[RMDB]
RNA sequence: GGGAACGACUCGAGUAGAGUCGAAAAAAAUACUAUGCUUUUCUUAAUAAGCACUUUUCUAUGAUGAUACUGUCUGAUGACGGUGUCGUUUGCUAUAAUAGUGAUUAUGCAGCUAAGGGUUACAUUGCAAUCGGUUUAAGUUCGCUUAAACCGAUUGAAAAGAAACAACAACAACAAC
Reactivity to 2A3 in 0.01 (KOAc 150mM, MgCl2 10mM, bicine 150mM(pH8.5), 24C), signal-to-noise 1, nucleotides 027 to 126: a010a000a000u190a060c060u060a060u250g010c010u020u100u100u050c040u040u150a100a050u070a070a000g020c000a010c010u110u040u070u040c070u060a100u080g010a000u000g010a000u000a000c000u040g000u010c010u100g230a120u260g000a040c010g000g060u030g020u000c000g000u000u040u020g010c010u070a020u020a230a030u020a030g010u000g030a010u040u000a000u030g050c020a030g000c010u030a020a010g050g000g070u050u070a100c090a060u040u230g000
Reactivity to DMS in 0.01 (KOAc 150mM, MgCl2 10mM, bicine 150mM(pH8.5), 24C), signal-to-noise 3, nucleotides 027 to 126: a060a060a040u010a060c050u000a130u000g000c000u010u000u010u010c080u000u000a150a030u000a030a010g000c010a010c040u000u010u000u010c080u020a070u000g010a040u000g000a030u000a010c000u000g010u000c000u010g030a160u020g010a010c020g010g010u000g010u010c010g020u010u010u000g010c210u010a030u000a060a030u000a040g040u000g000a050u000u020a040u000g010c200a060g010c070u010a070a060g000g010g010u010u000a080c160a100u000u000g000
The record gives the reactivity of an RNA of 177 nucleotides to 2A3 and DMS. Values cover nucleotides 27 to 126.